[RMDB]
RNA sequence: GGGAACGACUCGAGUAGAGUCGAAAAGUAAGAUACAUGACAGCUGCGCAGCAUCACUUCACGCGCUGUCAUCGGAUGUCUAGAACAUUCCUUCUAAGAAUAGCCACUGAAGAGUCUAUAAAGACGACAAUCGCGAAUCAUUCGUGAUUCGCGAUUGAAAAGAAACAACAACAACAAC
Reactivity to 2A3 in 0.01 (KOAc 150mM, MgCl2 10mM, bicine 150mM(pH8.5), 24C), signal-to-noise 3, nucleotides 027 to 126: g110u070a040a020g000a020u040a020c050a000u010g030a000c000a000g070c000u300g000c010g000c040a140g030c020a180u140c120a060c110u180u110c100a020c050g000c000g000c000u000g000u000c000a010u000c000g050g050a090u070g000u010c050u130a010g040a060a000c030a050u030u060c000c000u050u020c040u140a060a130g050a060a000u080a000g030c040c000a080c020u010g070a140a000g030a100g030u000c030u020a250u060a130a260a010g040a020c030g000a000
Reactivity to DMS in 0.01 (KOAc 150mM, MgCl2 10mM, bicine 150mM(pH8.5), 24C), signal-to-noise 2, nucleotides 027 to 126: g010u000a080a050g000a000u000a020c020a010u000g010a000c000a000g010c000u150g050c000g000c190a130g040c250a160u070c300a120c040u000u000c200a240c100g050c010g010c000u000g000u020c000a000u010c110g000g000a070u030g000u020c020u040a110g060a120a080c080a100u000u000c000c030u010u030c130u080a070a050g000a060a060u000a010g020c020c030a040c080u000g000a080a050g000a100g000u000c010u020a150u070a060a070a040g000a020c100g000a200